[RMDB]
Structure probing data (2A3 and DMS) for a 207-nucleotide construct. Conditions: 150 mM KOAc, 10 mM MgCl2 and 150 mM bicine (pH 8.5), 24 C. Reactivities are rounded to 0.1 and cut off at 0 and 3. The 2A3 profile rests on 3,996 reads. For DMS, 6,429 sequencing reads were counted. Values cover nucleotides 27 to 156.
RNA sequence: GGGAACGACUCGAGUAGAGUCGAAAACAUGUAUAAUAAUAAACGGAAGAGAUAUAGCACCGCAUGCACCAUCUGAUGGAAAGUGUAAAGACAACGAAUACAAACGCCAUAAUUUGUGUCCGGGAACAUACGCUUCCAGAUUAUGCGAUAGCAAGACCAUAAUAGAGUUUUUCGAAACUCUAUUAUGAAAAGAAACAACAACAACAAC
Reactivity to 2A3 in 0.01 (KOAc 150mM, MgCl2 10mM, bicine 150mM(pH8.5), 24C), signal-to-noise 5, nucleotides 027 to 156: c010a030u080g060u080a130u050a180a160u150a110a040u110a120a100a040c050g000g020a090a010g030a050g060a060u060a020u050a180g030c030a020c040c020g010c020a020u070g020c030a030c020c020a020u020c030u050g050a080u060g040g010a100a050a050g030u020g010u020a080a170a010g060a020c020a050a010c050g040a020a010u040a010c020a000a070a010c040g110c110c040a080u120a250a090u080u010u020g020u000g000u020c030c010g000g000g050a020a020c020a030u050a020c010g000c020u010u000c010c000a010g010a040u030u050a020u090g010c020g060a050u080a040g030c020a060a020g060a070c050
Reactivity to DMS in 0.01 (KOAc 150mM, MgCl2 10mM, bicine 150mM(pH8.5), 24C), signal-to-noise 3, nucleotides 027 to 156: c060a070u060g000u000a130u000a100a090u000a070a170u010a050a140a110c050g050g010a070a070g010a100g010a140u000a080u000a120g020c020a060c050c010g010c030a120u010g010c050a060c050c060a100u010c030u000g000a180u000g010g000a070a030a070g020u010g020u020a040a110a150g010a090c000a050a050c010g020a010a000u000a000c000a010a030a020c010g000c020c300a080u020a070a050u000u000u000g020u000g020u010c030c010g020g010g040a300a160c070a170u000a010c020g000c030u010u000c010c020a060g020a140u010u000a060u030g010c030g030a050u000a060g000c020a040a090g000a120c160